Structure probing data (DMS and 2A3) for a 207-nucleotide construct. For DMS, 4,017 sequencing reads were counted. Conditions: 150 mM KOAc, 10 mM MgCl2 and 150 mM bicine (pH 8.5), 24 C. It was measured as part of the RMDB library M2RFPK.
RNA sequence: GGGAACGACUCGAGUAGAGUCGAAAACAUAAGACCUCAGAGCUAAUGAGCCACAUACCUACCCAAGGUGAAAGCUCCUUCUCUCGCAAGGUGUAACUCAUGAUUCUCAUGACCCCUGGUUGGAGAGCGCGCUAACACGCCUUCGGGCGUGUUAGAACUAAUUUAUCACCUUCGGGUGAUAAAUUAGAAAAGAAACAACAACAACAAC
Reactivity to DMS in 0.01 (KOAc 150mM, MgCl2 10mM, bicine 150mM(pH8.5), 24C), signal-to-noise 2, nucleotides 027 to 156: c040a150u000a090a100g000a040c030c010u010c040a130g020a100g010c090u010a070a080u020g020a040g030c040c000a080c110a180u010a060c010c010u000a080c050c030c030a140a090g030g010u000g000a080a160a100g040c040u010c040c050u010u000c020u010c020u000c040g000c060a090a010g000g010u000g050u010a060a060c050u020c010a030u000g000a190u010u010c070u010c000a070u000g010a120c050c010c010c020u010g010g030u000u000g000g010a130g010a040g010c050g030c110g020c000u000a020a010c000a020c000g010c010c000u000u000c300g060g000g060c000g050u000g000u000u000a010g010a030a150
Reactivity to 2A3 in 0.01 (KOAc 150mM, MgCl2 10mM, bicine 150mM(pH8.5), 24C), signal-to-noise 3, nucleotides 027 to 156: c040a040u210a100a050g090a090c010c010u080c080a030g000a030g030c040u070a110a080u060g010a010g020c040c020a050c030a070u270a050c010c000u050a120c000c030c030a040a020g000g000u030g040a100a020a000g000c010u000c000c010u050u040c020u000c000u030c030g030c070a060a020g020g010u070g040u080a090a040c030u010c020a010u020g050a150u300u110c100u030c110a020u040g020a040c000c000c010c010u030g030g040u050u090g030g020a040g010a010g020c060g000c000g040c040u000a000a000c000a000c020g010c010c000u050u030c240g080g000g000c020g000u000g000u000u000a000g000a000a000